[RMDB]
RNA sequence: GGGAACGACUCGAGUAGAGUCGAAAAUGUGCUCAAAAGGCCGGGAGACCUUGUGAAAGUAACCUUACUUCUCUGAGCCACUUUCCCCACUAGUAACAUACAGAUAAUAGUGGAGUUUCCAUUUCACAGGGUCAUUUUGGGGAUUAAAUAACGGCAACGUAUAUUAGGCCUUCGGGCCUAAUAUACGAAAAGAAACAACAACAACAAC
Reactivity to DMS in 0.01 (KOAc 150mM, MgCl2 10mM, bicine 150mM(pH8.5), 24C), signal-to-noise 1, nucleotides 027 to 156: u000g000u010g020c010u030c010a080a140a140a050g000g030c050c010g030g030g020a180g000a040c020c010u000u020g050u010g040a110a040a050g050u020a060a160c190c050u000u000a040c030u010u000c030u010c090u010g000a040g030c030c010a040c050u000u000u000c000c000c000c040a040c060u000a030g000u020a060a110c090a280u020a300c150a180g020a160u000a020a100u000a030g050u000g010g010a050g000u000u020u000c040c010a240u010u000u010c000a010c030a050g000g000g010u010c010a080u000u000u000u040g010g020g080g010a190u010u000a050a100a160u010a070a080c060g000g000c010a080a210
Reactivity to 2A3 in 0.01 (KOAc 150mM, MgCl2 10mM, bicine 150mM(pH8.5), 24C), signal-to-noise 2, nucleotides 027 to 156: u060g030u050g020c000u010c000a050a100a030a010g040g000c000c000g000g010g000a060g000a000c010c010u020u000g030u000g010a030a020a080g070u130a060a050c010c030u120u090a070c020u080u070c170u050c070u120g010a000g010c010c000a020c010u050u010u000c000c050c050c010a000c000u030a030g050u190a180a020c010a140u300a090c040a070g150a080u040a090a040u020a080g000u000g060g000a060g000u000u010u010c010c000a030u030u010u010c020a000c000a010g000g000g010u060c010a020u090u050u020u080g000g000g000g000a000u040u230a200a060a070u170a100a040c020g020g010c020a040a020